[RMDB]
RNA sequence: GGGAACGACUCGAGUAGAGUCGAAAAGAUAUGGAAGAAGGAAUACUUUUGACGAUCGACGCAUCGGAAACGAUGCCAAGAUCGAUAAGUAUCCUUCUUCCUAAGUCAAAGCCUCGUUCGCGAGGCAGAUGUGUUACUCCUUCGGGAGUAACACAUCAAAAGAAACAACAACAACAAC
Reactivity to 2A3 in 0.01 (KOAc 150mM, MgCl2 10mM, bicine 150mM(pH8.5), 24C), signal-to-noise 2, nucleotides 027 to 126: g010a020u120a000u160g030g000a010a000g000a000a010g020g030a240a090u030a040c020u040u110u190u230g300a210c100g000a000u000c000g030a020c000g000c000a000u000c000g020g000a080a090a020c000g000a000u000g010c030c000a020a020g000a000u000c020g000a000u020a000a000g010u000a000u000c010c030u010u000c000u010u000c000c000u000a000a000g010u000c000a000a060a050g000c000c010u000c010g060u060u090c300g000c010g160a000g010g070c000a010
Reactivity to DMS in 0.01 (KOAc 150mM, MgCl2 10mM, bicine 150mM(pH8.5), 24C), signal-to-noise 2, nucleotides 027 to 126: g010a060u000a300u000g000g000a030a010g030a010a000g000g000a060a080u000a020c000u000u000u000u000g050a250c170g010a020u000c000g040a300c300g000c000a000u000c010g000g000a080a060a250c020g000a000u000g020c010c010a030a300g000a000u000c000g000a030u000a040a010g000u000a000u000c000c000u000u000c000u000u000c000c000u000a000a060g010u010c020a150a150a150g010c000c000u000c000g010u000u010c260g040c000g010a000g000g060c040a010
Conditions: 150 mM KOAc, 10 mM MgCl2 and 150 mM bicine (pH 8.5), 24 C. This 177-nucleotide RNA was probed chemically with 2A3 and DMS. DMS adducts were read by reverse transcription with MarathonRT. For DMS, 1,589 sequencing reads were counted. Reactivities are given for positions 27 through 126. As a SHAPE reagent, 2A3 marks flexible, mostly unpaired nucleotides at the ribose 2'-OH. The 2A3 profile rests on 4,023 reads.